[RMDB]
RNA sequence: GGGAACGACUCGAGUAGAGUCGAAAAGGUCGCUCGUUCGCGAGCGACCAAAGAGAUUGGCCAGGCCGGCCAGGCCGGAAAAUAGAAAAAGAAAAAGAAAAAAAAGCAUUCGGUUCGCCGAAUGCAACGUAUUAAGACUCUUCGGAGUCUUAAUACGAAAAGAAACAACAACAACAAC
Reactivity to DMS in 0.01 (KOAc 150mM, MgCl2 10mM, bicine 150mM(pH8.5), 24C), signal-to-noise 1, nucleotides 027 to 126: g030g000u010c000g090c020u000c020g020u000u000c270g040c020g010a020g020c000g010a000c000c000a000a050a080g010a210g010a120u000u000g000g000c000c020a110g010g000c180c070g030g020c120c080a060g000g020c020c060g010g000a020a050a080a050u000a040g000a050a030a050a030a100g020a010a010a100a010a140g010a100a020a020a020a060a100a040a140g000c010a020u000u000c000g020g010u000u010c190g000c000c000g010a010a000u000g000c000a010a030
Chemical mapping of a 177-nucleotide RNA with DMS.
The reactions ran in a buffer of 150 mM KOAc, 10 mM MgCl2 and 150 mM bicine (pH 8.5), at 24 C.
For DMS, 769 sequencing reads were counted.
It was measured as part of the RMDB library M2PK50.